[RMDB]
RNA sequence: GGGAACGACUCGAGUAGAGUCGAAAACAAACAAACACGGCUCGCUAAAAGCACCAGUAGAAAAGCGAACGCUAAAGAAGCGUAACGCAAAAAGCGAGACCGAAGCCAAAAGGCAAAUCUACUGGAACGCACUACUACAGUUCGCUGUAGUAGUGCGAAAAGAAACAACAACAACAAC
Reactivity to DMS in 0.01 (KOAc 150mM, MgCl2 10mM, bicine 150mM(pH8.5), 24C), signal-to-noise 1, nucleotides 027 to 126: c050a040a090a000c180a000a140a140c290a300c000g040g000c050u000c000g040c000u000a210a110a100a000g100c300a100c000c000a030g010u000a030g000a000a000a070a120g000c000g000a250a000c000g000c000u000a000a070a000g000a190a030g000c000g010u010a010a040c000g050c000a010a060a120a000a000g060c000g000a020g090a110c000c000g000a190a010g010c030c050a150a000a030a060g070g000c110a000a010a130u000c000u000a000c000u000g010g000a200a050
Reactivity to 2A3 in 0.01 (KOAc 150mM, MgCl2 10mM, bicine 150mM(pH8.5), 24C), signal-to-noise 3, nucleotides 027 to 126: c020a000a100a020c060a030a120a000c050a000c100g000g000c000u000c000g020c000u050a040a050a080a070g040c040a060c030c000a000g010u000a000g030a040a090a030a000g000c000g000a050a000c000g010c010u100a210a110a110g190a140a020g070c000g010u020a120a080c000g000c000a000a080a030a050a000g000c000g000a010g080a020c010c010g010a030a000g000c000c000a060a300a060a020g010g030c020a060a000a030u000c000u000a000c000u000g000g010a000a020